[RMDB]
RNA sequence: GGGAACGACUCGAGUAGAGUCGAAAACGAUGCACGAGAGUGCAUCGAGCUGACGUGAGUCAGCAAAGGUAGGAAGACGAUCGCAGGCGAAUGAAGCCCCUACCGACAGCGUCACACAUGAGCGUGAGCUCUAGUGACGCAGUCAAUGCGACGUCAACAUAAAUGACCCAUUCGUGGGUCAUUUAUGAAAAGAAACAACAACAACAAC
Reactivity to DMS in 0.01 (KOAc 150mM, MgCl2 10mM, bicine 150mM(pH8.5), 24C), signal-to-noise 3, nucleotides 027 to 156: c010g020a010u010g010c000a010c000g000a300g000a300g040u000g000c000a000u000c000g000a070g010c000u000g050a010c000g000u020g000a300g040u010c000a020g000c010a040a060a050g040g020u010a040g000g020a160a100g000a060c050g000a150u000c010g020c010a070g010g010c030g000a090a130u010g000a110a210g000c000c010c020c020u000a050c050c060g000a020c000a030g010c000g020u000c000a010c020a120c130a130u000g020a010g000c000g010u000g020a270g030c000u000c000u000a060g000u000g010a000c000g040c000a010g020u000c020a090a050u010g010c010g020a080c030g010u000c000a100a210
Reactivity to 2A3 in 0.01 (KOAc 150mM, MgCl2 10mM, bicine 150mM(pH8.5), 24C), signal-to-noise 6, nucleotides 027 to 156: c010g000a000u000g030c000a000c010g080a070g010a020g100u000g000c000a000u000c000g000a040g000c010u000g000a000c010g140u120g080a050g010u000c000a000g010c000a040a070a010g000g000u000a000g020g030a120a110g030a020c020g050a220u020c000g000c020a010g010g000c020g040a110a180u190g040a100a010g000c010c000c000c000u000a000c000c000g000a000c000a010g000c000g000u000c000a000c010a010c020a060u160g010a000g000c040g020u130g070a020g000c000u000c000u010a020g000u000g000a000c000g000c000a000g000u000c010a010a020u010g000c000g000a010c000g000u010c010a040a070